RNA sequence: GGGAACGACUCGAGUAGAGUCGAAAAUAAUUGCCAUCAUGAAAAUUCUGGGUGACUUUUUGUGACUAAAGUCCCAUUGUAAGCCACAUUCUUUGUCCAGCAGUGCUCACUGACUGCUGAAAUAAAUUUAGAGCUAAAAAUUCGUUUUUAGCUCUAAAAAAGAAACAACAACAACAAC
Reactivity to DMS in 0.01 (KOAc 150mM, MgCl2 10mM, bicine 150mM(pH8.5), 24C), signal-to-noise 3, nucleotides 027 to 126: u030a050a080u030u000g000c080c080a150u010c020a080u000g010a050a140a060a100u010u020c040u010g030g020g010u000g010a090c080u000u000u000u000u000g010u010g000a030c110u020a060a080a120g010u000c010c010c010a090u010u020g000u010a080a090g020c060c060a020c080a080u020u000c050u020u020u000g020u010c100c010a020g010c000a010g000u000g010c090u000c140a050c130u000g020a050c020u000g030c000u000g000a030a060a070u040a040a030a150u000
Reactivity to 2A3 in 0.01 (KOAc 150mM, MgCl2 10mM, bicine 150mM(pH8.5), 24C), signal-to-noise 4, nucleotides 027 to 126: u100a020a070u070u060g040c040c000a050u050c010a030u090g120a040a080a060a070u150u020c060u120g030g040g100u090g030a040c010u010u000u010u030u140g050u020g060a050c040u040a050a060a020g040u010c010c000c000a010u060u130g060u090a090a020g010c030c010a040c000a120u060u020c050u090u080u140g060u040c020c010a000g000c000a010g010u050g070c050u070c130a090c080u090g040a000c000u010g020c010u010g010a010a010a010u060a000a050a000u010